Chemical mapping of a 207-nucleotide RNA with DMS and 2A3. It was measured as part of the RMDB library RNAMAK. 2A3 adducts were read by reverse transcription with SuperScript II with manganese. Reactivities are given for positions 27 through 156.
RNA sequence: GGGAACGACUCGAGUAGAGUCGAAAAUGGCUAUUCGUAGCCAGAAACCUUUGUGGAGGAGGGAGGAGUAGAACUACGUCCCCUUGUGCCCAUUGGGCACCCACAGACGCUACUCCGAAGAACUCCUCCACUCUGGUGUAACCCUAGUUCGCUAGGGGAGCGAAAUAAGUUUCGACUUAUUUCGCUCAAAAGAAACAACAACAACAAC
Reactivity to DMS in 0.01 (KOAc 150mM, MgCl2 10mM, bicine 150mM(pH8.5), 24C), signal-to-noise 1, nucleotides 027 to 156: u010g000g060c010u010a040u000u000c220g040u000a050g030c020c010a070g010a110a180a060c030c000u000u000u000g040u000g010g010a070g030g000a050g030g000g010a200g000g000a050g010u000a040g000a050a280c000u010a160c030g010u000c010c000c030c110u000u010g000u000g010c010c010c050a300u000u010g050g020g020c000a000c020c110c050a050c110a160g020a030c040g000c010u010a020c020u010c010c010g000a040a200g040a160a120c010u000c020c000u000c020c000a000c010u000c030u000g000g010u000g020u010a050a100c000c010c010u000a120g000u010u000c240g010c020u010a030g010g010g010
Reactivity to 2A3 in 0.01 (KOAc 150mM, MgCl2 10mM, bicine 150mM(pH8.5), 24C), signal-to-noise 3, nucleotides 027 to 156: u040g000g010c010u020a030u090u140c290g110u040a010g000c000c000a000g060a080a130a000c000c000u000u030u030g000u000g000g000a000g000g000a010g000g020g010a010g000g000a000g010u010a000g010a210a080c200u220a070c220g030u030c040c000c000c060u050u110g000u000g010c000c000c120a300u250u300g020g000g010c010a010c010c030c020a220c040a010g000a000c010g010c010u000a000c000u010c020c030g040a200a010g010a010a000c000u000c010c000u000c000c010a000c000u000c000u020g030g000u030g060u080a070a090c000c000c000u000a020g000u060u090c230g020c180u020a000g030g000g010